An RNA of 177 nucleotides, treated with DMS and 2A3 and read out base by base. Conditions: 150 mM KOAc, 10 mM MgCl2 and 150 mM bicine (pH 8.5), 24 C. It was measured as part of the RMDB libraries RFM100 and RFMREP.

RNA sequence: GGGAACGACUCGAGUAGAGUCGAAAACGUCAGCUCGUACCGUGAGGCGUCCUGUUAAGUCAGGCAACGAGCGAGACCCGCACUCCUAAUUGCCAGCAACACCCUCGUGGUGGUUGGGUACAUUAGGUCAUAACUUGGCAUUCGUGCCAAGUUAUGAAAAAGAAACAACAACAACAAC
Reactivity to DMS in 0.01 (KOAc 150mM, MgCl2 10mM, bicine 150mM(pH8.5), 24C), signal-to-noise 7, nucleotides 027 to 126: c270g000u010c040a160g000c010u000c010g010u000a300c010c010g000u060g000a160g000g000c260g000u050c020c010u010g020u000u010a080a140g010u000c000a020g010g010c300a160a030c000g010a010g010c020g000a120g010a120c010c020c010g010c220a110c160u010c010c000u000a000a010u000u000g000c000c000a060g010c000a030a040c000a000c010c000c000u040c300g020u040g010g020u000g000g000u010u000g000g000g010u000a010c130a000u000u000a010g000g020
Reactivity to 2A3 in 0.01 (KOAc 150mM, MgCl2 10mM, bicine 150mM(pH8.5), 24C), signal-to-noise 9, nucleotides 027 to 126: c040g100u030c040a020g000c000u000c000g030u070a100c020c030g070u120g110a100g040g070c050g070u180c000c000u020g020u030u120a190a210g300u080c010a000g000g000c020a030a000c000g010a000g010c000g000a020g020a020c010c010c010g030c050a070c050u030c000c000u000a000a000u000u020g010c010c000a010g000c000a010a010c000a010c000c010c010u270c190g130u300g010g000u000g000g010u000u000g020g000g010u010a040c040a040u000u000a000g000g000